[RMDB]
RNA sequence: GGGAACGACUCGAGUAGAGUCGAAAAUCGUCUUAAUUCGUUAAGACGAACUCACGCAUUGUGUCCGUAAUCACAGAAAUAAAAUAAAACUAACAAAAUAAAAUCAUCUCAUGUUCGCAUGAGAUAACAUUUAAACGCUUUUCGAAGCGUUUAAAUGAAAAGAAACAACAACAACAAC
Reactivity to DMS in 0.01 (KOAc 150mM, MgCl2 10mM, bicine 150mM(pH8.5), 24C), signal-to-noise 1, nucleotides 027 to 126: u000c000g040u000c000u020u010a030a020u000u000c190g020u000u000a000a000g000a000c000g000a010a120c100u000c010a160c090g010c150a030u040u030g020u000g000u010c060c010g000u040a110a100u000c060a040c010a050g040a010a090a070u040a020a070a050a110u000a030a100a100a050c070u020a050a020c030a020a050a110a070u020a020a080a080a060u020c050a040u000c000u000c000a020u000g020u010u010c230g000c010a000u000g000a000g010a020u000a070a100
Reactivity to 2A3 in 0.01 (KOAc 150mM, MgCl2 10mM, bicine 150mM(pH8.5), 24C), signal-to-noise 3, nucleotides 027 to 126: u030c000g010u010c000u000u000a030a030u020u080c180g060u010u030a000a000g000a000c010g000a000a010c010u030c020a030c020g060c060a160u080u110g000u010g030u090c080c030g090u100a080a060u140c030a020c020a030g140a060a180a030u190a080a140a030a030u170a080a070a070a020c050u170a160a000c030a060a130a040a080u240a110a160a060a040u090c030a020u030c000u030c000a000u000g010u040u070c230g030c070a000u020g000a000g000a010u000a000a000
The record gives the reactivity of an RNA of 177 nucleotides to DMS and 2A3. Conditions: 150 mM KOAc, 10 mM MgCl2 and 150 mM bicine (pH 8.5), 24 C. The DMS profile rests on 882 reads. The data come from the RNA Mapping Database (RMDB), library M2PK50. Reactivities are given for positions 27 through 126.